This 177-nucleotide RNA was probed chemically with 2A3 and DMS.
[RMDB]
RNA sequence: GGGAACGACUCGAGUAGAGUCGAAAAAGAAGGGAUGACACAGUAGGAUAAGCUAAGCACACUGUUGGUUAUGUGUGCCCAAGCAUUGAGGCAGUCAAAGUAGGCAAAUCCGCUUUGAUAAUGCUGGCGAUAUCGCUACUUUCGAGUAGCGAUAUCGAAAAGAAACAACAACAACAAC
Reactivity to 2A3 in 0.01 (KOAc 150mM, MgCl2 10mM, bicine 150mM(pH8.5), 24C), signal-to-noise 8, nucleotides 027 to 126: a010g170a020a040g050g030g010a050u090g040a040c030a000c020a110g200u180a040g050g100a110u060a170a010g010c010u030a030a000g000c010a000c000a010c020u060g080u200u080g190g150u230u140a130u140g030u000g000u020g000c000c010c000a070a020g030c010a010u030u130g040a090g040g000c010a000g010u000c000a020a000a010g040u250a300g040g000c100a150a010a060u100c010c000g000c000u010u010u000g010a030u040a180a070u050g010c020u030g050g020
Reactivity to DMS in 0.01 (KOAc 150mM, MgCl2 10mM, bicine 150mM(pH8.5), 24C), signal-to-noise 4, nucleotides 027 to 126: a060g000a070a050g000g010g020a080u010g010a060c080a070c030a060g000u010a050g000g010a100u010a060a090g000c020u000a270a200g010c020a020c020a040c010u010g000u000u010g020g000u020u020a040u020g000u000g020u010g000c000c020c030a040a060g000c050a090u010u020g010a170g020g010c040a090g010u010c010a000a000a000g010u010a090g040g000c270a060a100a160u060c000c000g020c000u000u000u000g000a040u010a040a070u010g000c000u000g010g010
Conditions: 150 mM KOAc, 10 mM MgCl2 and 150 mM bicine (pH 8.5), 24 C. Source: RMDB library OK1LIB, as collected in RNAgym.